[RMDB]
Source: RMDB library M2RFPK, as collected in RNAgym.
Structure probing data (2A3) for a 207-nucleotide construct.
2A3 adducts were read by reverse transcription with SuperScript II with manganese.
The reactions ran in a buffer of 150 mM KOAc, 10 mM MgCl2 and 150 mM bicine (pH 8.5), at 24 C.
For 2A3, 598 sequencing reads were counted.
RNA sequence: GGGAACGACUCGAGUAGAGUCGAAAAACGCGGAGUACGCUCCGCGACAACACUUCUUUCGACCCGCUAACCGCGACCUAUGGGUCGUUAAAUUACGUCUCUAUCUUACUCACAUAACAUCGCACAAAAAACGUGGUUCGGUUCGCCGAACCACGAAGAAUCGGUUUGAGUUCGCUCAAACCGAUUCAAAAGAAACAACAACAACAAC
Reactivity to 2A3 in 0.01 (KOAc 150mM, MgCl2 10mM, bicine 150mM(pH8.5), 24C), signal-to-noise 1, nucleotides 027 to 156: a010c000g020c000g010g000a000g000u020a040c120g020c120u000c000c000g010c010g040a010c000a090a050c040a010c050u080u030c040u050u140u000c060g030a060c050c000c000g000c060u080a030a050c040c070g030c030g020a020c000c020u130a120u150g040g020g040u000c040g010u000u080a040a060a100u120u040a020c050g030u000c000u000c000u040a120u010c050u070u170a070c050u110c050a040c010a100u170a190a000c020a110u110c080g030c120a020c050a060a100a000a010a090a000c050g000u000g000g000u000u010c000g020g000u030u010c120g020c140c000g000a000a000c010c000a000c000g000a000a000